RNA sequence: GGGAACGACUCGAGUAGAGUCGAAAAAGACGAUGCCAUCUACGGAUGGCAUCGUCAGUGCAAUGAUGUAUUUUAUUCAACACAUCAUUCUGAAAGAACGUGUGGAAAACUAAUGACUGAGCACAAACUUCUUGCGCACUUUCGAGUGCGCAAGAAGAAAAGAAACAACAACAACAAC
Reactivity to 2A3 in 0.01 (KOAc 150mM, MgCl2 10mM, bicine 150mM(pH8.5), 24C), signal-to-noise 2, nucleotides 027 to 126: a000g010a000c000g000a000u000g000c080c000a050u000c000u010a000c150g200g000a000u000g050g010c000a000u000c000g000u000c000a000g000u000g000c000a000a030u000g000a000u190g090u000a130u000u130u090u090a250u180u110c090a070a070c000a000c000a110u000c070a040u010u000c030u040g180a210a080a120g020a140a000c070g000u000g020u010g000g100a060a000a000a000c300u300a150a170u060g070a020c070u140g040a060g150c010a000c000a000a090a000